[RMDB]
Chemical mapping of a 207-nucleotide RNA with 2A3.
For 2A3, 921 sequencing reads were counted.
RNA sequence: GGGAACGACUCGAGUAGAGUCGAAAAGAAACUUCAAUGCUAUCUAGAAGCUUUAGCGGGUAAUUUUUGAUAGCUUAGAUUAAAGAAUUGACGAAUCUAUAAUUGAAAUUUAGUCUUAGCUUAGCUAAACGCUUUGGGAAGUGAGCGAAGCUAAGUGGUAAAAAUUGUACUUCGGUACAAUUUUUACAAAAGAAACAACAACAACAAC
Reactivity to 2A3 in 0.01 (KOAc 150mM, MgCl2 10mM, bicine 150mM(pH8.5), 24C), signal-to-noise 2, nucleotides 027 to 156: g020a040a040a010c020u010u020c040a020a030u040g010c000u010a010u010c000u040a040g020a060a030g040c050u140u190u130a070g050c160g020g070g020u130a170a160u110u120u100u120u210g020a010u010a010g010c000u010u190a010g000a010u020u030a070a050a030g000a040a080u000u050g000a010c020g010a000a020u000c020u030a030u040a210a050u060u020g030a000a050a050u090u200u160a060g020u000c000u040u140a020g000c000u010u010a020g000c010u060a160a120a020c010g010c030u050u060u050g090g050g040a110a070g100u080g070a010g000c000g010a040a000g000c000u010a000a030g000u010g060